[RMDB]
RNA sequence: GGGAACGACUCGAGUAGAGUCGAAAAGCUCCGCAGUGAUCGCACCUCGAAUUGUCGACCGACGGCCACGGUGAGACCGUCACGCCGACCACCCCGUUUCGGCUACUAAUUUCGCAAGACGGCAACGCCUCAAUGAGGCGUUCGCGCCUCAUUGAGGAAAAGAAACAACAACAACAAC
Reactivity to 2A3 in 0.01 (KOAc 150mM, MgCl2 10mM, bicine 150mM(pH8.5), 24C), signal-to-noise 2, nucleotides 027 to 126: g020c010u020c030c030g010c050a050g080u040g070a090u090c040g020c020a050c020c020u060c040g090a100a090u130u080g060u060c010g010a090c000c020g040a060c010g020g020c020c030a070c020g070g000u060g020a050g030a040c020c020g000u010c020a000c040g010c000c020g040a040c010c040a060c020c000c000c010g010u020u060u020c010g000g070c000u030a060c040u020a060a190u110u090u050c010g050c080a130a000g010a000c010g000g060c030a040a020c030g070
Reactivity to DMS in 0.01 (KOAc 150mM, MgCl2 10mM, bicine 150mM(pH8.5), 24C), signal-to-noise 4, nucleotides 027 to 126: g020c050u000c030c020g030c070a090g020u000g000a060u000c050g020c050a080c060c050u000c080g010a090a120u000u010g010u000c010g000a090c110c070g010a100c060g000g020c020c030a060c050g030g000u010g010a110g000a100c020c020g010u000c030a110c150g000c010c030g020a070c130c080a100c030c030c000c030g010u000u000u000c020g000g000c030u000a110c130u010a050a080u000u000u010c060g030c090a100a100g000a060c040g000g000c060a060a070c160g010